[RMDB]
RNA sequence: GGGAACGACUCGAGUAGAGUCGAAAAGAUAUGGACUCCCCACCAGUAGAACUACGGUAUGUGUCGGAAACGACACUAAGCCGCUACUGAGGUCCUAAGUCAAAAGAAUACGCUUCGGCGUAUUCAACAAUUGGAUAAGCUUCGGCUUAUCCAAUUGAAAAGAAACAACAACAACAAC
Reactivity to DMS in 0.01 (KOAc 150mM, MgCl2 10mM, bicine 150mM(pH8.5), 24C), signal-to-noise 3, nucleotides 027 to 126: g030a110u010a180u000g010g020a010c010u000c070c020c010c060a300c150c000a010g000u000a020g000a050a040c120u010a300c040g010g000u000a210u000g010u000g010u000c000g020g000a100a130a180c000g020a020c020a000c010u000a080a170g000c000c000g020c030u000a000c010u000g000a200g030g000u000c000c010u000a090a100g000u000c070a040a040a100a090g010a030a000u000a000c000g010c000u000u010c160g050g010c010g000u000a000u000u000c010a070a120
Reactivity to 2A3 in 0.01 (KOAc 150mM, MgCl2 10mM, bicine 150mM(pH8.5), 24C), signal-to-noise 1, nucleotides 027 to 126: g000a020u130a120u200g000g000a020c060u170c050c060c000c000a000c020c000a000g000u070a000g020a150a080c140u210a030c300g000g000u000a020u090g000u150g020u000c000g010g000a060a050a090c030g010a000c030a000c000u000a010a040g000c000c000g000c020u010a010c000u000g020a070g020g050u000c000c010u020a220a100g130u080c060a000a000a030a110g000a030a010u010a000c020g000c030u040u200c300g130g000c010g000u000a000u000u000c000a000a000
Source: RMDB library TTRDEL, as collected in RNAgym. The record gives the reactivity of an RNA of 177 nucleotides to DMS and 2A3. For 2A3 the reverse transcriptase was SuperScript II with manganese. Conditions: 150 mM KOAc, 10 mM MgCl2 and 150 mM bicine (pH 8.5), 24 C.